[RMDB]
RNA sequence: GGGAACGACUCGAGUAGAGUCGAAAAGUGGAGGCGAAAGUCACCCUCCUCGCAUCGCAAGUUCGUGCUUGCGACUUACACGUAGGACGAGGGGUGGGCGAAAGUUGCCAUGAGACCGUAACUUUCGAUGAGGCGGGACUGUUCGCAGUCCCGCCAACGAAUACGAGCGGUUCGCCGCUCGUAUUCGAAAAGAAACAACAACAACAAC
Reactivity to 2A3 in 0.01 (KOAc 150mM, MgCl2 10mM, bicine 150mM(pH8.5), 24C), signal-to-noise 1, nucleotides 027 to 156: g070u060g000g030a040g010g010c050g020a030a020a010g120u130c000a110c010c000c000u050c000c070u000c000g040c010a020u040c020g000c000a000a020g000u280u300c200g240u300g070c000u000u000g010c000g000a000c000u060u170a050c150a020c040g170u130a010g040g140a040c030g010a100g050g000g000g120u180g090g000g000c000g000a000a020a000g020u000u040g020c030c030a030u090g030a010g000a080c110c000g000u010a000a000c000u000u000u010c030g040a060u200g120a020g000g000c020g000g000g000a000c000u000g070u030u120c210g000c090a000g010u000c000c050c000g000c000c000a010a020
The record gives the reactivity of an RNA of 207 nucleotides to 2A3. Conditions: 150 mM KOAc, 10 mM MgCl2 and 150 mM bicine (pH 8.5), 24 C.